[RMDB]
Structure probing data (DMS and 2A3) for a 177-nucleotide construct. As a SHAPE reagent, 2A3 marks flexible, mostly unpaired nucleotides at the ribose 2'-OH. For 2A3 the reverse transcriptase was SuperScript II with manganese. It was measured as part of the RMDB library OK2TRN.

RNA sequence: GGGAACGACUCGAGUAGAGUCGAAAAUACAUGAUGAUGAACCUGGAUUAUCUAAGGAUAAUAGACAAUCAUAAAGAAUUGAACAUCCAAGAUGAGUUUGUUCAAGAUCUCUUCAGAGCAUAUCAUGACGGAAUUAACGUUUCGACGUUAAUUCCGUAAAAGAAACAACAACAACAAC
Reactivity to DMS in 0.01 (KOAc 150mM, MgCl2 10mM, bicine 150mM(pH8.5), 24C), signal-to-noise 2, nucleotides 027 to 126: u000a250c020a030u000g010a040u000g000a020u000g010a120a110c100c020u010g000g020a010u000u000a030u000c010u000a050a160g010g000a100u010a090a110u000a040g000a010c040a000a040u000c020a140u000a050a060a040g000a060a140u000u000g000a010a050c000a010u020c020c010a130a280g020a240u010g010a050g010u000u000u000g010u000u000c010a000a040g000a060u010c060u000c030u010u030c000a010g000a110g010c010a000u000a030u000c010a020u000g030
Reactivity to 2A3 in 0.01 (KOAc 150mM, MgCl2 10mM, bicine 150mM(pH8.5), 24C), signal-to-noise 2, nucleotides 027 to 126: u150a000c000a040u020g000a020u080g040a010u000g000a040a070c000c010u040g010g010a010u030u040a020u030c020u050a040a080g230g060a100u080a180a040u020a200g060a010c010a000a060u030c030a000u150a150a140a010g040a010a030u010u000g000a000a010c010a000u000c010c040a050a010g130a260u170g000a010g040u000u070u070g000u020u020c000a000a030g040a200u020c030u000c010u130u050c050a000g010a020g040c020a010u000a000u050c010a010u030g050

Annotation:
For DMS the reverse transcriptase was MarathonRT. The reactions ran in a buffer of 150 mM KOAc, 10 mM MgCl2 and 150 mM bicine (pH 8.5), at 24 C. For 2A3, 1,285 sequencing reads were counted.